[RMDB]
About this RNA:
Chemical mapping of a 207-nucleotide RNA with DMS and 2A3. DMS adducts were read by reverse transcription with MarathonRT. Source: RMDB library RNAMAK, as collected in RNAgym.
RNA sequence: GGGAACGACUCGAGUAGAGUCGAAAAGUGAGGAUUCGUCCUCACGGUUCGGGGUCGUGCGUUGAUCGCUGCUUCGCUAUGAAGCUGAAGCCUCCACGGUGGAGCGAAGGGCGGGAGCACGACGGAGGCACCCUUGAGAAUGGCAUUCGUGCCAUAACUAAUGCAUAUCCUUCGGGAUAUGCAUUAGAAAAGAAACAACAACAACAAC
Reactivity to DMS in 0.01 (KOAc 150mM, MgCl2 10mM, bicine 150mM(pH8.5), 24C), signal-to-noise 3, nucleotides 027 to 156: g010u000g010a030g050g000a060u000u000c300g010u000c000c000u000c010a010c020g000g020u000u000c040g020g010g030g020u000c030g040u000g000c040g020u000u000g010a080u000c020g000c000u000g020c000u000u000c000g010c020u000a140u020g000a090a210g010c000u000g010a090a150g000c160c010u000c020c030a180c060g010g000u000g000g000a040g030c010g020a070a030g030g010g010c020g000g000g000a090g040c000a010c020g010a000c010g000g020a090g020g010c050a130c020c000c020u000u010g010a150g000a090a060u000g010g010c010a150u000u000c210g010u020g010c010c000a020u000a020a180
Reactivity to 2A3 in 0.01 (KOAc 150mM, MgCl2 10mM, bicine 150mM(pH8.5), 24C), signal-to-noise 8, nucleotides 027 to 156: g020u010g000a010g000g020a030u080u130c240g070u050c070c000u010c000a000c010g000g000u100u120c040g010g000g010g040u020c010g000u010g000c010g150u210u060g030a040u020c000g000c020u260g210c000u010u010c000g000c010u120a160u300g060a060a030g000c010u030g040a070a030g030c000c020u030c030c000a030c040g000g020u030g000g050a010g000c010g000a000a010g000g010g010c010g000g000g000a020g000c000a000c010g000a010c000g000g010a010g000g010c030a070c010c030c000u070u160g090a090g070a210a070u030g030g000c030a020u030u100c230g070u090g000c000c010a010u030a050a010